[RMDB]
RNA sequence: GGGAACGACUCGAGUAGAGUCGAAAACGAGGUCAUCAUCGCUGCCACGCCAUAUUCCUUGGUGAGGCCGUUGCCGCCCAUCGACUGUACGGCCUGAUCGACCGCGCGGCUGGAUGCCUCGGCCGCACACGUCAUAUGAUUUCGAUCAUAUGACGUGAAAAGAAACAACAACAACAAC
Reactivity to 2A3 in 0.01 (KOAc 150mM, MgCl2 10mM, bicine 150mM(pH8.5), 24C), signal-to-noise 9, nucleotides 027 to 126: c010g000a020g010g080u230c040a020u010c010a020u130c100g060c140u040g000c010c010a040c020g010c010c020a070u080a180u300u230c090c070u050u060g020g000u020g070a040g010g000c000c010g040u040u120g020c010c010g010c030c030c000a130u120c060g080a070c030u060g030u170a050c030g070g030c010c010u080g050a180u030c030g030a050c070c020g000c020g000c000g020g000c020u040g070g010a030u040g020c000c010u000c000g000g020c000c010g080c010a030
Reactivity to DMS in 0.01 (KOAc 150mM, MgCl2 10mM, bicine 150mM(pH8.5), 24C), signal-to-noise 9, nucleotides 027 to 126: c020g010a030g010g010u010c040a030u000c010a130u010c140g020c110u010g020c020c020a100c040g000c020c120a070u010a130u010u010c150c150u000u000g020g020u000g010a030g010g010c000c030g010u000u000g030c020c030g010c050c040c130a110u010c080g000a040c030u000g010u000a050c050g000g000c030c030u000g000a070u000c040g010a050c140c130g010c120g020c020g010g020c010u000g010g000a030u000g000c020c000u000c010g000g000c010c000g010c130a220

Source information
This 177-nucleotide RNA was probed chemically with 2A3 and DMS. Values cover nucleotides 27 to 126. For 2A3, 64,804 sequencing reads were counted.